[RMDB]
RNA sequence: GGGAACGACUCGAGUAGAGUCGAAAAGAUAUGGAACAUGGAGCGAUUCGGUCUAAGACAGUCGGAAACGAUCGAGACUCCUUUCGCGUUGAAAUGUUCCUAAGUCAAAGAUAGGUUCGCCUAUCAAGUUAUACACCGUGUUCGCACGGUGUAUAACAAAAGAAACAACAACAACAAC
Reactivity to 2A3 in 0.01 (KOAc 150mM, MgCl2 10mM, bicine 150mM(pH8.5), 24C), signal-to-noise 2, nucleotides 027 to 126: g010a020u080a040u140g000g000a000a000c010a010u010g000g040a030g010c000g000a000u050u070c040g010g030u000c020u020a120a040g080a130c070a060g030u020c000g050g000a060a080a060c010g010a030u070c030g020a010g040a040c100u300c060c000u010u030u000c030g000c040g110u180u060g030a040a060a010u000g000u020u000c000c000u010a150a030g030u010c020a140a030a040g000a000u010a010g000g070u070u050c240g070c100c000u000a000u000c010a010a020
Reactivity to DMS in 0.01 (KOAc 150mM, MgCl2 10mM, bicine 150mM(pH8.5), 24C), signal-to-noise 4, nucleotides 027 to 126: g000a050u000a300u000g010g000a020a000c010a010u000g010g000a090g010c010g010a040u000u010c130g000g010u000c000u010a110a100g010a150c300a100g020u000c010g010g020a100a060a170c030g000a020u000c070g010a050g010a030c010u010c040c030u000u010u000c010g010c020g000u010u020g000a090a070a010u000g000u010u000c000c000u000a050a120g000u000c030a070a100a110g000a010u000a010g010g000u000u000c260g020c000c000u010a010u000c000a070a070